This 177-nucleotide RNA was probed chemically with DMS. Source: RMDB library OK2TRN, as collected in RNAgym. The RNA was probed in 150 mM KOAc, 10 mM MgCl2 and 150 mM bicine (pH 8.5) at 24 C. DMS adducts were read by reverse transcription with MarathonRT.
RNA sequence: GGGAACGACUCGAGUAGAGUCGAAAAGGACCUUGAAUAACAUUUAGGGAAGUCACUCUUAUCUGGUGCUUGACUGCAACAUCCUAAAUCUGUAACAAAAGGGAGAAAAUAAAGUCAGCAAUGGUAAUGCGAGUAGUACUUUCGAGUACUACUCGCAAAAAGAAACAACAACAACAAC
Reactivity to DMS in 0.01 (KOAc 150mM, MgCl2 10mM, bicine 150mM(pH8.5), 24C), signal-to-noise 1, nucleotides 027 to 126: g000g000a110c010c010u000u000g000a040a040u000a100a150c060a300u000u000u000a030g020g030g030a010a140g000u030c000a030c030u000c010u000u040a110u000c170u010g000g050u000g000c060u010u030g040a030c000u000g000c140a060a080c070a140u000c040c010u000a030a020a170u000c180u000g000u000a070a060c130a040a070a110a000g010g010g010a110g000a050a030a060a140u000a030a140a040g000u000c010a040g040c120a060a060u060g000g000u020a030a220